[RMDB]
RNA sequence: GGGAACGACUCGAGUAGAGUCGAAAAACGGAUGGUACGCCAUCCGACCAUUGGGUAGAAGCGUUCAAUCAGCACCGUGACGGUGCAGCUGGGAAAUUGCCCAUGAUACGCACCAUACGUGGUGCGAAAAAGCCAUCGGUGUUCGCACCGAUGGCAACCCCACUGAACAGUUCGCUGUUCAGUGGGGAAAAGAAACAACAACAACAAC
Reactivity to 2A3 in 0.01 (KOAc 150mM, MgCl2 10mM, bicine 150mM(pH8.5), 24C), signal-to-noise 1, nucleotides 027 to 156: a000c000g000g000a000u000g000g030u060a050c160g030c000c000a000u000c000c000g000a020c060c000a100u100u120g000g000g050u040a030g010a160a000g000c020g010u030u040c120a130a100u120c060a020g000c000a010c000c000g060u150g200a230c210g000g000u000g010c010a000g000c010u020g000g000g100a020a130a090u190u070g010c020c020c000a000u020g040a010u020a010c030g000c000a000c000c000a010u070a070c270g070u030g030g040u000g000c000g000a030a030a000a000a000g000c000c000a000u030c000g000g000u000g010u030u050c060g000c140a000c000c000g010a010u000g010g000c000a000a000

Structure probing data (2A3) for a 207-nucleotide construct. Conditions: 150 mM KOAc, 10 mM MgCl2 and 150 mM bicine (pH 8.5), 24 C. Values cover nucleotides 27 to 156. 2A3 adducts were read by reverse transcription with SuperScript II with manganese.